[RMDB]
RNA sequence: GGGAACGACUCGAGUAGAGUCGAAAAGAUAUGGAAUUGUAGGCAACAGCGAUGAUAUCGGAAACGAUAUAUCGACAUGCCUUACAAUUCCUAAGUCAAAAGUGACUUUACUUCGGUAAAGUCACAACUUUUAUAUCCGCUUCGGCGGAUAUAAAAGAAAAGAAACAACAACAACAAC
Reactivity to 2A3 in 0.01 (KOAc 150mM, MgCl2 10mM, bicine 150mM(pH8.5), 24C), signal-to-noise 2, nucleotides 027 to 126: g000a000u000a000u080g010g010a020a020u020u000g010u010a000g060g000c090a300a090c230a300g070c100g020a010u170g100a020u040a010u000c030g000g000a020a000a000c010g000a000u000a000u000a000u000c000g100a110c040a100u270g000c000c000u030u030a010c000a010a000u020u000c010c000u010a010a000g010u000c020a000a040a100a160g000u010g010a000c020u010u000u040a000c010u030u120c300g080g000u000a000a000a000g000u000c000a000c000a000a000
Reactivity to DMS in 0.01 (KOAc 150mM, MgCl2 10mM, bicine 150mM(pH8.5), 24C), signal-to-noise 2, nucleotides 027 to 126: g000a030u010a090u020g000g000a020a010u000u000g020u000a040g000g020c000a050a140c300a160g030c010g020a020u010g000a020u000a000u000c000g030g000a020a030a050c000g020a030u000a000u000a020u010c000g000a060c160a150u010g020c000c000u010u040a000c010a000a000u000u000c000c010u000a000a070g000u000c030a080a080a120a140g010u000g000a020c000u000u000u010a000c010u000u010c230g020g010u000a000a020a020g000u000c000a010c030a040a050